Chemical mapping of a 177-nucleotide RNA with DMS and 2A3. The reactions ran in a buffer of 150 mM KOAc, 10 mM MgCl2 and 150 mM bicine (pH 8.5), at 24 C. The DMS profile rests on 5,829 reads.
[RMDB]
RNA sequence: GGGAACGACUCGAGUAGAGUCGAAAAGGUUGGCUUCAGAGGUGUCUACAUCAUCGUGAAUCAAGUAGGGUUCUACUACUACGUGGUCGCCAACGGCUAGAUCGGUCACGUCCUCGGCGACUUCUGAACCUAUCGUAGGUUUCGACCUACGAUAGGUAAAAGAAACAACAACAACAAC
Reactivity to DMS in 0.01 (KOAc 150mM, MgCl2 10mM, bicine 150mM(pH8.5), 24C), signal-to-noise 5, nucleotides 027 to 126: g010g000u000u000g010g010c040u000u000c060a080g040a090g010g010u000g020u000c040u000a100c100a070u000c070a050u010c060g000u010g000a070a070u010c130a080a050g010u000a020g000g010g000u020u010c060u000a060c030u000a050c070u000a080c080g020u000g020g000u000c020g010c030c020a060a130c230g010g010c060u010a070g000a080u000c060g020g000u010c070a090c120g000u000c040c020u000c300g000g010c040g000a030c070u000u010c010u010g000a270
Reactivity to 2A3 in 0.01 (KOAc 150mM, MgCl2 10mM, bicine 150mM(pH8.5), 24C), signal-to-noise 2, nucleotides 027 to 126: g080g010u060u050g040g000c000u090u030c040a030g020a060g130g000u040g020u050c050u080a070c030a100u110c000a030u040c050g060u030g140a080a080u140c080a110a050g020u020a040g060g050g010u110u040c030u110a080c010u000a040c000u010a040c080g120u070g060g000u020c010g000c020c000a030a010c050g000g000c010u080a050g000a200u110c070g010g100u080c060a030c100g010u020c000c010u060c060g000g020c010g030a010c000u000u010c000u060g010a030